[RMDB]
RNA sequence: GGGAACGACUCGAGUAGAGUCGAAAACAGCCCCUGACAGAGACUCCUCCGGGCCUAGAUGUCAGCGGGGCCAACGAGAAGCCUGCCCGCAGCCAGUGAUUUUCCCCGAAAGUGGGAAAGUGAGUGAAGUUAGUGUGGUUUUCGAACCACACUAACUAAAAGAAACAACAACAACAAC
Reactivity to DMS in 0.01 (KOAc 150mM, MgCl2 10mM, bicine 150mM(pH8.5), 24C), signal-to-noise 1, nucleotides 027 to 126: c110a160g030c000c010c000c010u000g020a010c040a060g000a190g000a040c040u000c030c050u000c130c180g020g020g000c030c020u010a030g010a140u000g000u000c040a070g000c100g050g000g000g030c040c040a080a050c100g030a150g010a060a090g010c080c070u000g020c030c020c030g010c110a080g010c040c030a090g030u000g010a030u000u000u000u000c000c000c000c010g010a040a070a240g020u000g000g000g030a060a020a000g050u000g010a140g010u000g020a090
Source: RMDB library OK2TRN, as collected in RNAgym. Structure probing data (DMS) for a 177-nucleotide construct. For DMS, 862 sequencing reads were counted. Reactivities are given for positions 27 through 126. The reactions ran in a buffer of 150 mM KOAc, 10 mM MgCl2 and 150 mM bicine (pH 8.5), at 24 C. DMS adducts were read by reverse transcription with MarathonRT.